[RMDB]
RNA sequence: GGGAACGACUCGAGUAGAGUCGAAAAUUAGGGCCACUGAAAUCGCGUCAGCAUAUGGUGACGAGGAUGUACUCAAGAAGGCCACCAACAUACAAAAACUUAUCGGGUGGAGAUAUUCUGCAGAGUCACCCGGAUGAUAAUUCGUUAUCAUCCGGGUAAAAGAAACAACAACAACAAC
Reactivity to 2A3 in 0.01 (KOAc 150mM, MgCl2 10mM, bicine 150mM(pH8.5), 24C), signal-to-noise 2, nucleotides 027 to 126: u090u080a040g030g020g050c000c020a050c060u070g020a050a000a070u020c040g000c000g080u010c020a100g020c050a120u170a070u300g170g020u040g010a000c000g000a020g040g020a030u040g030u070a040c020u040c040a000a060g070a060a020g050g000c000c000a000c000c030a040a080c020a030u210a040c090a050a170a020a140a040c060u140u100a080u140c050g020g020g000u000g000g080a090g010a020u130a110u230u010c040u040g000c030a030g000a030g080u030c000
Reactivity to DMS in 0.01 (KOAc 150mM, MgCl2 10mM, bicine 150mM(pH8.5), 24C), signal-to-noise 2, nucleotides 027 to 126: u010u010a090g000g020g020c000c020a180c100u020g000a080a160a030u000c060g040c040g000u000c040a030g010c010a240u010a130u020g020g010u000g000a010c020g000a080g010g010a020u000g020u000a050c140u010c020a060a040g030a090a110g010g000c030c000a080c030c020a060a070c110a080u010a090c160a050a040a150a090a120c150u000u000a050u030c160g000g000g000u010g010g000a060g000a080u020a010u000u020c020u000g020c140a090g000a100g010u010c050